Chemical mapping of a 207-nucleotide RNA with 2A3 and DMS. For 2A3 the reverse transcriptase was SuperScript II with manganese. The RNA was probed in 150 mM KOAc, 10 mM MgCl2 and 150 mM bicine (pH 8.5) at 24 C. Reactivities are given for positions 27 through 156. For 2A3, 2,147 sequencing reads were counted. For DMS, 2,127 sequencing reads were counted.
RNA sequence: GGGAACGACUCGAGUAGAGUCGAAAAACAACAGAUAGCUGGAACCAGCGUAGAAUUCUACGCAUAUCCAUAGCGAAUGGUACCUGUAAAGAAAAUAAUGAUGGAUGUACAAGUACCAACAGUCAUCAAUGCCAUGGUGAUGUCAAUCACAUAUGCAUCAGUGCAUUUACUUCGGUAAAUGCACUGAAAAAGAAACAACAACAACAAC
Reactivity to 2A3 in 0.01 (KOAc 150mM, MgCl2 10mM, bicine 150mM(pH8.5), 24C), signal-to-noise 4, nucleotides 027 to 156: a000c030a010a020c020a050g120a150u150a050g010c000u030g020g000a060a130c090c030a070g000c020g000u000a000g040a160a300u300u110c000u000a010c000g000c010a000u020a030u020c000c000a040u130a030g010c010g050a070a040u010g000g010u000a000c000c010u010g010u050a030a100a050g150a050a090a060a040u250a070a060u120g070a020u110g050g100a020u100g000u030a010c000a060a000g010u010a000c000c000a000a030c000a020g090u050c010a030u020c000a030a090u100g030c050c010a040u080g010g010u000g010a010u020g150u120c090a060a030u030c030a010c020a060u170a020u110g000c010a030
Reactivity to DMS in 0.01 (KOAc 150mM, MgCl2 10mM, bicine 150mM(pH8.5), 24C), signal-to-noise 2, nucleotides 027 to 156: a100c080a130a110c110a110g020a110u000a030g040c130u000g000g020a090a140c260c080a170g030c000g020u000a020g000a210a190u000u000c000u000a050c030g000c000a220u010a160u000c020c000a100u000a080g010c010g040a130a050u000g000g010u000a040c010c010u040g010u000a050a060a150g010a130a130a120a130u000a070a040u030g000a120u010g020g000a180u000g040u000a020c000a000a030g000u020a000c000c040a050a130c010a030g000u000c000a030u000c030a100a100u000g050c040c130a140u000g010g000u000g000a070u000g030u000c130a060a000u020c090a020c040a090u010a070u010g010c090a300